[RMDB]
An RNA of 177 nucleotides, treated with DMS and read out base by base. Source: RMDB library TTRDEL, as collected in RNAgym. The RNA was probed in 150 mM KOAc, 10 mM MgCl2 and 150 mM bicine (pH 8.5) at 24 C. For DMS the reverse transcriptase was MarathonRT.
RNA sequence: GGGAACGACUCGAGUAGAGUCGAAAAGAUAUGGACUUUCCCUCUGCCGACGAAGAAGUUCGGAAACGAACUUCAGAGGACCCAGAGAACAAGUCCUAAGUCAAACGCCAGAGUUCGCUCUGGCGAAUCAUGCGGAUUAGUUCGCUAAUCCGCAUGAAAAAGAAACAACAACAACAAC
Reactivity to DMS in 0.01 (KOAc 150mM, MgCl2 10mM, bicine 150mM(pH8.5), 24C), signal-to-noise 1, nucleotides 027 to 126: g010a010u000a300u000g010g030a030c010u020u000u010c300c070c000u000c000u000g020c080c020g030a240c010g000a300a160g000a020a010g010u000u000c000g000g000a120a050a110c000g000a000a000c000u010u000c010a070g000a300g000g000a240c130c100c010a000g000a050g010a060a050c270a060a000g010u000c000c000u000a040a140g000u000c060a070a080a120c050g050c000c000a000g010a030g040u020u000c210g020c000u000c000u000g000g000c000g000a010a010